This 177-nucleotide RNA was probed chemically with 2A3 and DMS. For 2A3 the reverse transcriptase was SuperScript II with manganese. The reactions ran in a buffer of 150 mM KOAc, 10 mM MgCl2 and 150 mM bicine (pH 8.5), at 24 C. DMS adducts were read by reverse transcription with MarathonRT. The 2A3 profile rests on 1,326 reads. For DMS, 2,844 sequencing reads were counted.

RNA sequence: GGGAACGACUCGAGUAGAGUCGAAAACGGACUUGGCGACGUCGGAAAAGUUCUUCAUGCCUUCCAGAUCAGUCAGAUCGGCGAGCUUGCCCUUGUUGAACAGCUCCAGCGAGGUGUCGAACGGACAAGGAGGAGUAUACUUCGGUAUACUCCUCCUAAAAGAAACAACAACAACAAC
Reactivity to 2A3 in 0.01 (KOAc 150mM, MgCl2 10mM, bicine 150mM(pH8.5), 24C), signal-to-noise 1, nucleotides 027 to 126: c010g050g000a040c030u040u080g000g000c040g040a030c030g060u050c050g060g070a030a080a020a050g030u010u040c000u040u080c020a050u060g020c000c000u030u090c060c000a030g030a090u070c030a000g190u110c030a040g010a090u040c000g020g010c030g050a000g030c020u080u100g000c010c060c000u020u040g040u010u120g080a080a030c020a050g020c000u000c010c000a030g050c000g060a030g000g000u040g070u100c000g030a050a040c000g010g050a020c010a040
Reactivity to DMS in 0.01 (KOAc 150mM, MgCl2 10mM, bicine 150mM(pH8.5), 24C), signal-to-noise 3, nucleotides 027 to 126: c090g010g010a060c050u000u010g030g010c030g020a070c140g000u000c080g020g000a070a080a110a140g010u000u000c030u010u000c090a090u010g010c030c020u000u010c080c050a110g010a070u010c050a120g010u020c140a130g010a040u000c020g010g020c050g000a040g000c050u000u010g020c050c040c040u010u000g010u000u010g000a090a080c110a090g020c100u000c010c020a100g000c100g020a050g000g000u000g020u000c040g000a030a060c090g000g010a070c150a070